Source information: The record gives the reactivity of an RNA of 207 nucleotides to 2A3. Conditions: 150 mM KOAc, 10 mM MgCl2 and 150 mM bicine (pH 8.5), 24 C. Values are in units of 0.01, from 0 to 300, in steps of 10. Reactivities are given for positions 27 through 156.

[RMDB]
RNA sequence: GGGAACGACUCGAGUAGAGUCGAAAACCUGUUAUCUGACCAAUAACAGAAUGCACCACAGCGUAAAAUCAUCUGAUUGAGUGAGUUGGUCGCACCGCCAUUUGACGAACGAACGCCAAGCCUAAGCACUACGAGUAUGUGUUCGCACAUACUCGAAUCUGGAGAGUUUCUUCGGAAACUCUCCAGAAAAAGAAACAACAACAACAAC
Reactivity to 2A3 in 0.01 (KOAc 150mM, MgCl2 10mM, bicine 150mM(pH8.5), 24C), signal-to-noise 1, nucleotides 027 to 156: c000c000u000g010u010u000a000u000c020u020g030a030c060c000a050a010u000a040a000c000a000g070a130a240u100g000c060a060c010c000a020c050a050g030c030g020u040a000a080a020a100u050c060a040u050c010u120g030a170u090u060g000a090g060u010g010a020g010u010u030g020g000u000c020g050c050a010c000c000g010c010c020a000u050u080u170g140a130c030g040a170a000c020g010a040a020c020g000c000c000a060a020g000c060c040u130a110a000g080c020a060c190u190a060c110g000a000g000u000a000u010g050u010g020u030u030c130g050c070a000c020a000u000a000c000u010c000g000a000a020

It was measured as part of the RMDB library M2RFPK.